[RMDB]
RNA sequence: GGGAACGACUCGAGUAGAGUCGAAAAGCUCGGAGGUUCGCCUCCGAGCAAAUAAAAAUUGCUGGAAAACGAGCAAAACCAGCAAAAUACAUAACGCUCGAAAAACACAACAGUUCGCUGUUGUGAACUAUUCUUUAACGUUCGCGUUAAAGAAUAGAAAAGAAACAACAACAACAAC
Reactivity to 2A3 in 0.01 (KOAc 150mM, MgCl2 10mM, bicine 150mM(pH8.5), 24C), signal-to-noise 3, nucleotides 027 to 126: g000c000u000c020g010g010a020g020g050u090u140c220g100c070c000u000c010c020g010a000g000c000a000a000a000u000a000a010a000a000a010u030u030g000c000u000g010g010a070a060a100a100c040g000a010g000c040a020a010a030a100c020c000a020g000c000a100a100a040a040u120a030c050a020u200a100a050c090g000c010u000c000g000a100a030a010a040a010c010a010c000a010a010c010a010g010u060u090c150g050c080u000g000u000u000g000u000g010a000a000
Reactivity to DMS in 0.01 (KOAc 150mM, MgCl2 10mM, bicine 150mM(pH8.5), 24C), signal-to-noise 2, nucleotides 027 to 126: g000c000u000c000g020g010a020g050g030u020u020c200g010c000c010u020c010c000g010a010g010c000a010a020a010u000a050a080a140a140a120u000u010g000c010u000g030g000a070a050a060a090c000g000a010g000c000a160a110a100a100c000c000a000g000c000a030a020a080a100u020a070c150a060u010a100a110c210g000c000u000c010g000a030a100a070a150a270c010a000c000a000a010c000a030g000u000u000c200g030c000u000g000u000u010g000u000g000a060a120
An RNA of 177 nucleotides, treated with 2A3 and DMS and read out base by base.
The 2A3 profile rests on 4,199 reads.
The reactions ran in a buffer of 150 mM KOAc, 10 mM MgCl2 and 150 mM bicine (pH 8.5), at 24 C.